[RMDB]
RNA sequence: GGGAACGACUCGAGUAGAGUCGAAAAGUGGGUGGUCAGCUAGCCCAUUCUGCAGUGUGGGACACUGCCUGACCCUUUUGUAUACUUUGCCAACUUCUUUCUCAUCCCGGGUCAUCUUUUUCCUGUUAGUCAAGAGAAGCCAGAUAGAAUUGGAGGGCUUGCAUCCGAUAUUCGUAUCGGAUGCAAGAAAAGAAACAACAACAACAAC
Reactivity to 2A3 in 0.01 (KOAc 150mM, MgCl2 10mM, bicine 150mM(pH8.5), 24C), signal-to-noise 1, nucleotides 027 to 156: g130u070g030g040g010u120g070g040u050c010a010g000c050u030a070g040c010c010c000a000u020u000c050u070g020c040a120g000u000g030u090g070g150g000a120c090a050c170u010g030c000c010u050g030a060c000c000c030u000u100u160u060g150u020a220u000a090c050u000u110u230g020c020c000a110a090c060u060u030c020u060u130u000c020u060c020a070u090c070c060c000g000g050g000u000c040a070u060c040u030u130u010u040u130c060c010u090g030u140u150a100g060u110c020a040a040g020a010g010a090a000g000c020c020a040g010a000u070a040g030a090a120u060u020g040g000a040g000g020g030